[RMDB]
RNA sequence: GGGAACGACUCGAGUAGAGUCGAAAAUUAAUGCGGGCAUGGUCUACAAUAUCCUUUAAAAUAGGAAUAAGGCUUGAUGGAAAGCCGAACGAGUAAUUUCUUAUGAACCGUGUGAUUUGUCCGCUAUCAAGUUGAGGACUUAUUACAUGACAUUUGGGCACUAAUGUCCAUUCGUGGACAUUAGUGCAAAAGAAACAACAACAACAAC
Reactivity to 2A3 in 0.01 (KOAc 150mM, MgCl2 10mM, bicine 150mM(pH8.5), 24C), signal-to-noise 1, nucleotides 027 to 156: u100u100a020a030u120g020c000g000g000g000c020a040u180g000g000u000c010u030a060c000a000a110u130a130u060c000c000u060u060u040a140a220a030a020u040a060g000g190a080a140u100a080a030g000g000c000u010u010g110a120u290g020g110a010a010a010g000c040c000g010a000a000c040g000a010g030u000a000a120u050u100u240c100u140u120a110u140g060a010a010c070c000g000u000g050u000g000a010u020u000u080g010u000c000c060g050c020u000a050u060c000a100a050g210u050u050g100a010g000g000a000c000u000u020a010u020u000a000c060a050u060g040a000c000a040u230u200u090g100g060